[RMDB]
RNA sequence: GGGAACGACUCGAGUAGAGUCGAAAACAUUAGCUUCGGCAUCCCACCCUACGGCUUCGAAAAGCUGAGAUGAGCUCAGCAAGGGAACUCAAGAGACUCAACUCAGAGAACUGAGAGAGAGAAUAAAUAAUAGACAAUUGUUCGCAAUUGUCUAUUAAAAAGAAACAACAACAACAAC
Reactivity to DMS in 0.01 (KOAc 150mM, MgCl2 10mM, bicine 150mM(pH8.5), 24C), signal-to-noise 3, nucleotides 027 to 126: c110a080u010u030a090g030c030u000u000c100g000g040c040a120u000c010c010c010a240c080c070c010u020a070c070g000g000c030u000u000c070g000a100a080a120a140g000c000u020g030a010g000a130u000g000a080g000c000u000c000a040g020c210a080a070g000g020g040a050a110c040u010c060a080a190g010a110g000a120c020u010c020a040a110c010u000c010a030g020a160g000a090a120c080u020g010a050g000a120g000a090g020a070g020a090a080u000a040a080a120
Reactivity to 2A3 in 0.01 (KOAc 150mM, MgCl2 10mM, bicine 150mM(pH8.5), 24C), signal-to-noise 2, nucleotides 027 to 126: c000a070u130u190a000g040c030u080u050c160g060g010c000a050u020c010c030c000a010c050c040c000u060a050c050g070g010c000u080u110c070g070a020a100a040a010g010c000u000g020a030g000a080u170g040a030g060c000u000c010a000g000c000a040a040g000g000g010a050a070c020u010c050a080a010g060a040g030a210c010u010c060a000a080c010u020c010a070g030a050g030a300a150c040u080g000a010g010a000g000a000g010a000g080a150a010u130a190a070a010